RNA sequence: GGGAACGACUCGAGUAGAGUCGAAAAUCGGACUGGUUCGCCAGUCCGAAAAUAACGGUCCCUGCUUGCAGCUGAUUGUAAAUGCUAACUGGCCUUACAUCAAAAGCCCGGACUUCGGUCCGGGCAACAACGCAUAGAAGUUCGCUUCUAUGCGUUGAAAAGAAACAACAACAACAAC
Reactivity to DMS in 0.01 (KOAc 150mM, MgCl2 10mM, bicine 150mM(pH8.5), 24C), signal-to-noise 2, nucleotides 027 to 126: u000c000g010g000a010c000u000g020g000u000u000c240g030c000c000a010g000u010c000c010g000a000a010a060a080u010a070a130c160g000g010u000c000c020c000u010g010c090u000u000g000c140a110g010c070u010g010a040u000u010g040u000a030a060a050u000g000c050u000a080a080c170u000g000g010c010c130u000u010a040c060a060u030c110a110a060a150a120g030c000c010c000g000g040a020c000u000u000c160g000g000u010c010c010g000g000g010c010a010a020